[RMDB]
RNA sequence: GGGAACGACUCGAGUAGAGUCGAAAAGAAAUCAACCCUACGGUUGUUACUUAUGUUAUGCACAACUAUGGUAUUGUUGUCUUCUGUGUAUCACUUGUAUGUCUUCAAUCAGGUCUUAUCAAGUGAUUGAGAGACUCGUUCGCGAGUCUCAAAAGAAACAACAACAACAAC
Reactivity to 2A3 in 0.01 (KOAc 150mM, MgCl2 10mM, bicine 150mM(pH8.5), 24C), signal-to-noise 2, nucleotides 027 to 129: g010a000a000a000u160c020a000a270c020c050c050u110a090c000g010g120u000u000g060u000u010a000c000u020u070a000u300g140u300u000a070u050g040c000a000c000a110a040c130u000a000u120g000g010u240a240u080u000g000u000u000g060u030c100u020u010c000u000g000u000g060u090a000u000c000a000c000u000u000g000u040a000u100g120u000c000u140u290c040a000a300u130c090a090g080g080u000c000u070u050a020u180c000a000a000g000u000g100a000u000u000g000a000
Reactivity to DMS in 0.01 (KOAc 150mM, MgCl2 10mM, bicine 150mM(pH8.5), 24C), signal-to-noise 1, nucleotides 027 to 129: g000a050a150a220u010c120a130a130c000c000c020u010a090c190g040g040u050u050g030u030u030a160c030u000u120a240u060g050u000u000a050u030g010c150a050c060a020a050c030u000a110u040g080g010u060a200u010u270g000u100u000g060u000c030u000u060c100u100g000u000g160u000a040u030c030a000c030u000u150g000u040a050u000g000u000c000u140u000c080a210a200u080c170a020g070g010u000c030u010u090a050u030c080a110a000g040u000g050a040u000u000g000a180